[RMDB]
RNA sequence: GGGAACGACUCGAGUAGAGUCGAAAAGGGGUCAGAGCGCCCAGACGCGACGAAGUCCCAGGUCACAAUACACUGAAGCCUCCACGGUGUAUUUAAGCUGGGACAGAGCGUCUGUAACGCUCUGACGGAGGCACCCAAAGUGUAGUUCGCUACACAACACUCUUUGUCUAUUCGUAGACAAAGAGUGAAAAGAAACAACAACAACAAC
Reactivity to 2A3 in 0.01 (KOAc 150mM, MgCl2 10mM, bicine 150mM(pH8.5), 24C), signal-to-noise 6, nucleotides 027 to 156: g050g000g010g010u020c010a020g000a000g000c010g020c030c080c010a010g000a000c000g130c000g010a300c010g000a040a000g000u000c010c000c000a000g020g040u110c050a010c060a070a000u010a000c000a000c010u040g040a170a030g040c010c000u000c000c000a020c010g000g010u000g000u000a000u000u000u010a020a010g010c000u000g000g000g000a000c010a000g000a000g010c000g000u000c000u010g000u010a120a030c010g000c000u000c000u000g000a000c000g000g000a000g000g000c010a050c000c010c000a060a110a030g010u010g000u010a010g020u050u130c260g010c100u010a000c010a000c000a030a020
Reactivity to DMS in 0.01 (KOAc 150mM, MgCl2 10mM, bicine 150mM(pH8.5), 24C), signal-to-noise 2, nucleotides 027 to 156: g000g040g020g000u000c030a010g010a090g000c010g000c010c110c030a020g010a060c050g050c000g080a190c170g000a150a200g020u000c000c010c010a080g030g020u000c040a180c130a040a030u010a020c000a070c010u020g000a040a220g020c020c020u010c020c000a300c020g010g000u000g010u000a000u000u000u010a130a220g000c000u000g040g020g020a020c020a000g000a120g040c010g050u000c000u010g040u000a040a060c030g000c000u010c010u000g000a030c030g040g010a020g090g070c040a180c000c000c000a140a100a140g030u000g000u000a030g010u010u000c240g050c020u000a060c020a020c000a020a300
Conditions: 150 mM KOAc, 10 mM MgCl2 and 150 mM bicine (pH 8.5), 24 C.
This 207-nucleotide RNA was probed chemically with 2A3 and DMS.
Reactivities are given for positions 27 through 156.
DMS adducts were read by reverse transcription with MarathonRT.
For 2A3 the reverse transcriptase was SuperScript II with manganese.
For 2A3, 12,380 sequencing reads were counted.